Source: RMDB library RFMREP, as collected in RNAgym. Chemical mapping of a 177-nucleotide RNA with DMS and 2A3. The 2A3 profile rests on 616 reads. For DMS, 1,383 sequencing reads were counted.

[RMDB]
RNA sequence: GGGAACGACUCGAGUAGAGUCGAAAAAAACAUCCAGCAACUUUUUUGGUUGUAUAGUCAAAGGUGCUUGAGUCAUUGGCAUGUAAGAUAAAUAUACCUGCAUGUUAGUCUUAGGUUCUGAUAGAAAUCUAAAUCGUAUGUUCGCAUACGAUUUAGAAAAAGAAACAACAACAACAAC
Reactivity to DMS in 0.01 (KOAc 150mM, MgCl2 10mM, bicine 150mM(pH8.5), 24C), signal-to-noise 2, nucleotides 027 to 126: a080a020a040c070a060u000c030c020a220g000c050a030a040c020u000u000u030u020u000u020g010g000u000u000g000u000a080u000a080g010u000c090a040a070a140g000g020u000g020c000u000u000g040a030g020u020c070a130u000u000g000g000c010a020u000g000u000a040a000g030a030u010a040a100a100u010a100u000a020c070c020u010g000c010a020u000g010u000u000a030g010u000c030u000u000a030g010g020u000u000c020u000g010a150u020a120g000a030a050a070
Reactivity to 2A3 in 0.01 (KOAc 150mM, MgCl2 10mM, bicine 150mM(pH8.5), 24C), signal-to-noise 1, nucleotides 027 to 126: a040a000a000c000a030u020c000c000a000g070c000a000a040c080u160u300u160u130u160u300g040g020u000u020g050u020a060u100a080g070u070c180a110a040a020g000g000u030g050c020u010u010g010a000g040u030c020a020u000u070g010g000c000a000u010g020u010a050a020g020a030u060a170a250a010u140a000u030a090c010c000u000g000c000a000u000g000u000u000a000g010u050c000u020u050a010g030g000u060u000c000u000g010a030u080a200g130a060a130a010
For DMS the reverse transcriptase was MarathonRT.